Structure probing data (DMS and 2A3) for a 177-nucleotide construct. For 2A3 the reverse transcriptase was SuperScript II with manganese. The data come from the RNA Mapping Database (RMDB), library OK2TRN. DMS adducts were read by reverse transcription with MarathonRT.
RNA sequence: GGGAACGACUCGAGUAGAGUCGAAAAAAGCGGAAGUAAAAUUCCGUGGAGGACCGAACCACAUUGGUGUUGAAAAACCAUGGGAUUUGUCUUAGAAAUUCCAAUCGAACUCGGAGAUAGCUGGUUCACCAUACAAAUAUUUCGAUAUUUGUAUGGUAAAAGAAACAACAACAACAAC
Reactivity to DMS in 0.01 (KOAc 150mM, MgCl2 10mM, bicine 150mM(pH8.5), 24C), signal-to-noise 8, nucleotides 027 to 126: a120a170g010c010g010g000a020a020g010u000a100a100a160a160u000u000c000c000g030u000g000g010a110g010g010a130c080c040g010a020a040c020c010a060c070a070u010u000g010g000u000g000u000u010g000a080a090a100a230a040c020c020a040u000g000g000g010a040u000u000u000g000u000c100u000u010a120g000a060a060a090u000u000c010c010a060a090u000c060g000a050a060c090u010c110g010g010a140g000a090u010a070g000c060u000g000g010u000u000c040
Reactivity to 2A3 in 0.01 (KOAc 150mM, MgCl2 10mM, bicine 150mM(pH8.5), 24C), signal-to-noise 4, nucleotides 027 to 126: a000a020g020c030g000g020a010a000g010u060a010a030a100a190u010u000c010c000g000u010g010g040a070g000g030a030c020c030g020a020a010c020c000a090c030a100u060u120g020g000u050g020u060u200g100a110a110a020a020a000c010c010a000u010g010g000g010a010u020u020u040g030u040c030u040u060a060g200a070a100a040u080u000c010c000a010a080u050c030g020a050a030c030u020c120g060g020a100g040a130u100a040g080c070u040g050g000u040u030c020

The RNA was probed in 150 mM KOAc, 10 mM MgCl2 and 150 mM bicine (pH 8.5) at 24 C.